The record gives the reactivity of an RNA of 177 nucleotides to 2A3 and DMS. Reactivities are given for positions 27 through 126. DMS adducts were read by reverse transcription with MarathonRT. The reactions ran in a buffer of 150 mM KOAc, 10 mM MgCl2 and 150 mM bicine (pH 8.5), at 24 C.
RNA sequence: GGGAACGACUCGAGUAGAGUCGAAAACGGAUGCGCUGAAGGCACUGGGUGAGCUGCUGCAGGCCGAAGGCGAGUUCGUCGGCAGCCUGCACGACGGCGCCGCGGACAGCCACUGGGAGCACCACGAGAAGUUAUGGAGAUUCGUCUCCAUAACUUCAAAAGAAACAACAACAACAAC
Reactivity to 2A3 in 0.01 (KOAc 150mM, MgCl2 10mM, bicine 150mM(pH8.5), 24C), signal-to-noise 3, nucleotides 027 to 126: c030g040g040a090u070g020c060g000c070u060g040a110a030g070g010c030a030c130u070g020g070g010u070g050a080g030c030u050g000c010u030g020c060a020g020g000c010c040g060a030a020g030g000c030g020a040g050u120u120c020g050u030c030g010g010c020a060g000c000c000u080g010c110a070c140g200a040c020g010g000c000g000c000c000g060c010g010g010a020c020a000g010c000c010a010c050u050g040g000g020a050g010c030a050c030c030a040c060g110a140
Reactivity to DMS in 0.01 (KOAc 150mM, MgCl2 10mM, bicine 150mM(pH8.5), 24C), signal-to-noise 6, nucleotides 027 to 126: c070g010g000a070u000g020c040g010c020u010g000a110a190g010g020c030a110c080u000g010g000g010u000g010a120g010c070u000g000c060u000g000c020a030g010g010c010c020g010a110a130g010g000c010g000a190g020u000u000c010g020u000c010g010g030c030a120g010c010c020u010g010c060a040c170g010a110c080g010g030c020g010c020c010g010c020g000g010a160c080a140g010c020c020a070c100u000g000g000g000a110g010c050a080c030c020a090c130g000a170